[RMDB]
Annotation:
Chemical mapping of a 177-nucleotide RNA with DMS and 2A3. It was measured as part of the RMDB library OK2TST.

RNA sequence: GGGAACGACUCGAGUAGAGUCGAAAACGAUUAUAUCCACUCCUGAAACGAUCGUGCCUGAUUUUUCAUCUACAAUGAUCUUAUUUUUUGCGCUGUAGUUAAUGGGGAUUUCUUGCACUAAAGCUAAAGAAGAUGUGAUUUUCGAAUCACAUCUUCUAAAAGAAACAACAACAACAAC
Reactivity to DMS in 0.01 (KOAc 150mM, MgCl2 10mM, bicine 150mM(pH8.5), 24C), signal-to-noise 3, nucleotides 027 to 126: c140g000a090u000u020a100u000a300u020c020c050a090c090u000c010c010u000g010a070a070a110c180g000a050u010c100g020u000g000c010c050u000g000a030u000u000u000u010u000c030a060u010c010u010a070c080a060a040u000g010a060u000c050u000u000a030u000u010u010u000u010u000g000c070g020c050u000g010u000a000g000u010u010a090a080u010g010g020g000g010a070u000u000u000c020u000u000g010c040a040c060u000a050a140a110g010c080u010a060a140
Reactivity to 2A3 in 0.01 (KOAc 150mM, MgCl2 10mM, bicine 150mM(pH8.5), 24C), signal-to-noise 4, nucleotides 027 to 126: c010g030a050u150u150a100u090a050u150c040c030a040c060u040c010c020u100g090a140a050a040c070g040a070u090c030g020u020g000c010c000u020g050a060u020u010u010u080u070c010a030u000c000u020a020c030a050a090u050g060a090u060c030u070u210a280u140u260u040u010u070u060g030c030g020c020u020g000u020a030g030u060u120a050a020u100g000g000g000g010a000u010u070u020c010u010u040g000c010a030c020u140a080a080a080g070c010u090a200a130
Notes: For DMS, 2,545 sequencing reads were counted.